[RMDB]
RNA sequence: GGGAACGACUCGAGUAGAGUCGAAAAGGUGGAUCACCUGAGGUCAGGAGUUUGAGACCAGCCUGGCUAACCUGGUGAAACCCCAGUCUCCACUAAAAAUACAAAAAAUUAGCCGGGCAUGGUGGCACGUGCCUGUAAUCCCAGCUACUCCGGAGGCUGACACAUAGUUGUUCGCAACUAUGUGUCAAAAAGAAACAACAACAACAAC
Reactivity to 2A3 in 0.01 (KOAc 150mM, MgCl2 10mM, bicine 150mM(pH8.5), 24C), signal-to-noise 1, nucleotides 027 to 156: g020g000u070g080g000a140u000c010a000c000c030u080g030a080g030g000u010c040a040g020g020a110g050u130u230u170g120a080g030a010c010c000a000g000c000c000u000g010g010c000u000a040a070c000c040u000g000g000u010g000a080a100a090c010c000c000c000a030g000u010c000u000c030c030a080c040u210a020a050a000a120a050u240a060c090a030a120a040a000a020a070u050u050a050g010c000c000g000g000g050c010a050u040g000g000u020g020g000c030a000c100g040u080g040c000c000u070g040u060a010a060u000c010c010c010a000g010c020u100a100c050u070c060c030g070g000a050g010g030c060

Record summary
An RNA of 207 nucleotides, treated with 2A3 and read out base by base. The 2A3 profile rests on 600 reads. Source: RMDB library OK3TST, as collected in RNAgym. For 2A3 the reverse transcriptase was SuperScript II with manganese. The reactions ran in a buffer of 150 mM KOAc, 10 mM MgCl2 and 150 mM bicine (pH 8.5), at 24 C.